[RMDB]
RNA sequence: GGGAACGACUCGAGUAGAGUCGAAAAUCCGAGGAUUGCAGAUCUUGAUUUGUGAAUGGGAUGACUCGGACCUCGUUCGCUGCGUCGAGAAAUCUCGACAUGAUCUCUCGUAGCUGACAUGUCGUUACAACGAUAAUGUUUUCGAACAUUAUCGUUGAAAAGAAACAACAACAACAAC
Reactivity to DMS in 0.01 (KOAc 150mM, MgCl2 10mM, bicine 150mM(pH8.5), 24C), signal-to-noise 8, nucleotides 027 to 126: u010c000c000g010a060g000g000a100u010u010g010c030a030g000a050u000c030u030u020g010a060u010u020u010g020u020g000a050a110u020g010g010g010a080u010g010a190c030u000c040g000g000a090c070c030u000c050g010u000u000c100g020c030u000g000c060g010u000c050g020a040g010a080a070a070u010c030u010c110g010a050c090a040u010g000a080u010c040u000c030u010c110g010u010a110g010c100u000g000a080c060a060u010g000u000c020g010u010u030a140
Reactivity to 2A3 in 0.01 (KOAc 150mM, MgCl2 10mM, bicine 150mM(pH8.5), 24C), signal-to-noise 9, nucleotides 027 to 126: u000c000c000g010a030g040g020a090u070u110g070c030a030g040a160u040c030u120u220g100a170u130u130u150g130u070g100a130a110u110g040g010g060a040u060g050a080c010u000c010g020g010a030c010c010u040c020g060u070u020c020g000c040u030g010c020g060u050c040g010a010g030a060a150a070u060c060u020c050g050a050c020a050u110g100a150u010c020u000c000u010c060g070u080a040g020c050u030g020a020c010a050u060g010u030c010g030u050u050a040